[RMDB]
RNA sequence: GGGAACGACUCGAGUAGAGUCGAAAAGCAAGAUGCUUCGGCAUCUUGCAGUCGUAGCGCGAUCGACAGAAUUACAGCUAUGUCGAACGAGGAAGAGGGCGCACAUCAUCCCUUUCGAGGGAUGAAAAUAGUCCUGUGUAUUCGUACACAGGACUAUAAAAGAAACAACAACAACAAC
Reactivity to DMS in 0.01 (KOAc 150mM, MgCl2 10mM, bicine 150mM(pH8.5), 24C), signal-to-noise 5, nucleotides 027 to 126: g010c000a000a010g000a020u010g010c000u000u020c180g060g020c000a000u000c000u000u000g030c000a020g010u000c060g010u010a070g020c030g000c030g020a090u000c010g000a020c020a030g010a130a140u000u000a100c300a110g000c070u010a110u000g000u010c000g020a020a100c070g000a130g000g010a070a050g000a090g010g010g010c050g040c100a110c180a150u000c000a000u000c000c000c000u000u000u010c150g000a020g000g000g010a000u000g000a010a030a070
Reactivity to 2A3 in 0.01 (KOAc 150mM, MgCl2 10mM, bicine 150mM(pH8.5), 24C), signal-to-noise 3, nucleotides 027 to 126: g010c000a000a010g010a020u010g010c000u040u140c210g100g000c000a000u000c000u000u010g030c000a010g050u030c020g050u030a020g030c010g000c000g070a030u010c020g010a000c020a010g110a080a040u220u210a140c050a080g050c080u090a040u110g000u020c000g020a030a040c040g010a050g070g060a050a070g050a090g080g110g000c050g020c030a030c000a030u020c000a000u000c000c000c000u020u030u030c180g090a010g000g020g010a000u000g010a020a020a000